Source: RMDB library OK2TRN, as collected in RNAgym. Structure probing data (2A3 and DMS) for a 177-nucleotide construct. For 2A3 the reverse transcriptase was SuperScript II with manganese. For DMS the reverse transcriptase was MarathonRT.
RNA sequence: GGGAACGACUCGAGUAGAGUCGAAAAGGGCUAGCGGGUGGUCCGCUAGUGGUGGCGUUGAUCCUCGGACGGAUUGGUAGCAUUGGUAAGCUGUAUUGGUUUAUGCCACCGAGUGCUAACCUGGCCAGCUACUAAAUGGAUUCGUCCAUUUAGUAGCAAAAGAAACAACAACAACAAC
Reactivity to 2A3 in 0.01 (KOAc 150mM, MgCl2 10mM, bicine 150mM(pH8.5), 24C), signal-to-noise 7, nucleotides 027 to 126: g030g000g020c010u020a010g000c020g000g070g060u230g130g180u120c000c000g000c010u000a010g010u020g030g020u030g020g010c040g010u030u140g040a050u030c020c030u040c110g050g080a070c050g030g010a040u040u070g060g040u070a040g020c040a060u000u090g040g010u080a060a040g020c030u070g050u230a200u160u200g070g060u110u100u060a070u150g020c000c010a010c010c020g010a050g030u100g000c020u030a130a130c010c010u010g010g000c010c010a020
Reactivity to DMS in 0.01 (KOAc 150mM, MgCl2 10mM, bicine 150mM(pH8.5), 24C), signal-to-noise 8, nucleotides 027 to 126: g020g000g010c020u000a020g010c010g000g000g040u010g030g010u010c020c010g010c010u000a010g020u000g010g030u000g000g010c040g010u000u010g010a060u000c010c030u010c120g010g010a110c090g000g000a070u000u000g010g010u000a040g010c030a100u000u000g010g010u000a120a120g010c020u010g010u010a110u010u010g010g010u000u000u000a050u010g010c010c030a040c040c020g000a070g010u000g010c030u000a070a110c010c010u010g010g010c030c050a160